[RMDB]
RNA sequence: GGGAACGACUCGAGUAGAGUCGAAAAUCAUGAAAAGCAUGGUAUUGAAUAUCACUGGUAACAAGAGGAUGCUGCUUUGUUGAGUCUCAUUUACAUACUAAUUGCCACUGCUUUGUCUCUGUAGCCACCGACAAGAGACAUUCGUGUCUCUUGUCGGAAAAGAAACAACAACAACAAC
Reactivity to 2A3 in 0.01 (KOAc 150mM, MgCl2 10mM, bicine 150mM(pH8.5), 24C), signal-to-noise 3, nucleotides 027 to 126: u070c000a020u080g030a020a060a010a040g040c010a020u030g020g000u070a110u070u200g110a100a030u100a030u140c040a010c090u040g010g050u040a060a040c050a050a090g050a030g110g000a040u050g000c040u030g010c030u130u080u130g110u040u110g040a030g040u030c020u000c050a040u070u080u100a040c010a040u080a050c020u060a110a060u090u050g000c000c000a040c070u010g010c000u060u020u070g030u010c040u000c020u030g050u050a020g120c030c020a040
Reactivity to DMS in 0.01 (KOAc 150mM, MgCl2 10mM, bicine 150mM(pH8.5), 24C), signal-to-noise 2, nucleotides 027 to 126: u020c010a060u010g000a130a050a070a070g000c020a060u000g000g030u000a030u000u000g010a060a090u010a070u000c090a030c070u000g000g020u000a050a060c100a060a130g000a110g000g010a090u000g010c020u000g010c050u010u000u010g020u000u000g000a110g000u010c100u010c040a080u000u000u010a040c150a040u000a120c110u020a060a100u000u000g010c020c020a070c180u000g010c020u000u000u000g020u000c020u000c050u000g020u000a090g000c070c050a130